[RMDB]
RNA sequence: GGGAACGACUCGAGUAGAGUCGAAAACGCCGACGCCACAAUCUUGCGGUUGAAUUGCUCAUUCUCUUCCAACUGGAACGCAUUCACUUCCGCAGGCAACAGCAUUUUCCGCUCAAAUACCAAAGCCUCUCAAUGAGAACUUCGGUUCUCAUUGAGAAAAAGAAACAACAACAACAAC
Reactivity to 2A3 in 0.01 (KOAc 150mM, MgCl2 10mM, bicine 150mM(pH8.5), 24C), signal-to-noise 6, nucleotides 027 to 126: c060g010c010c000g020a030c040g030c010c000a070c030a060a100u060c040u050u080g000c010g010g030u040u030g030a090a060u150u120g020c030u040c060a100u120u000c100u000c000u170u120c040c040a150a150c150u110g000g030a020a010c030g000c010a020u000u020c020a020c060u120u020c010c000g020c010a000g010g020c010a050a060c020a040g050c030a030u030u030u020u030c000c020g000c000u060c040a120a150a020u190a110c040c030a060a050a030g090c010c020
Reactivity to DMS in 0.01 (KOAc 150mM, MgCl2 10mM, bicine 150mM(pH8.5), 24C), signal-to-noise 2, nucleotides 027 to 126: c210g000c090c020g020a130c240g000c000c000a130c040a090a180u000c130u010u000g000c120g030g000u000u030g000a060a040u010u010g000c000u020c260a200u040u000c040u000c070u000u100c020c210a180a130c300u020g020g030a000a110c150g000c020a030u000u030c040a000c210u050u010c010c050g050c020a020g040g010c300a070a160c210a060g000c080a050u000u000u040u000c020c060g000c030u000c000a040a080a110u020a140c090c000a030a100a030g000c090c070